[RMDB]
RNA sequence: GGGAACGACUCGAGUAGAGUCGAAAAUGCCGCGCAGCAGUGGCAAGAACUUAGUGAUCAGUACGCACUCGCAUGCGCCGAGUUGGGCCAAUUGUUGGGCGAGGUUCAGGCCAGCAGCUGGCAGGGAUACACAACCACGGUUCGCCGUGGUUGUGUAAAAAGAAACAACAACAACAAC
Reactivity to DMS in 0.01 (KOAc 150mM, MgCl2 10mM, bicine 150mM(pH8.5), 24C), signal-to-noise 1, nucleotides 027 to 126: u040g000c020c010g000c000g000c050a020g030c010a110g030u070g000g000c010a160a070g050a050a000c000u000u030a070g000u030g020a130u000c140a040g000u000a170c170g020c050a080c000u000c040g000c020a140u030g030c000g030c060c060g010a050g000u000u000g000g030g000c010c020a080a110u000u000g000u000u000g000g000g000c030g000a070g020g030u000u040c010a100g000g000c000c000a030g000c140a020g070c070u000g000g000c000a070g010g000g000a170
Reactivity to 2A3 in 0.01 (KOAc 150mM, MgCl2 10mM, bicine 150mM(pH8.5), 24C), signal-to-noise 1, nucleotides 027 to 126: u180g010c000c000g050c080g000c000a030g000c030a040g000u070g080g160c090a010a050g030a030a110c100u100u090a060g110u180g210a060u140c080a060g050u030a070c120g020c050a070c040u030c080g000c010a080u110g040c010g000c040c050g030a040g030u110u080g000g030g000c000c030a040a040u010u000g030u000u000g000g030g000c030g030a080g000g070u060u160c050a040g100g000c000c040a000g000c000a020g050c050u020g030g000c000a040g140g000g020a020
An RNA of 177 nucleotides, treated with DMS and 2A3 and read out base by base. DMS (dimethyl sulfate) methylates the pairing face of unpaired adenines and cytosines. Values are in units of 0.01, from 0 to 300, in steps of 10. For DMS, 1,667 sequencing reads were counted. The RNA was probed in 150 mM KOAc, 10 mM MgCl2 and 150 mM bicine (pH 8.5) at 24 C.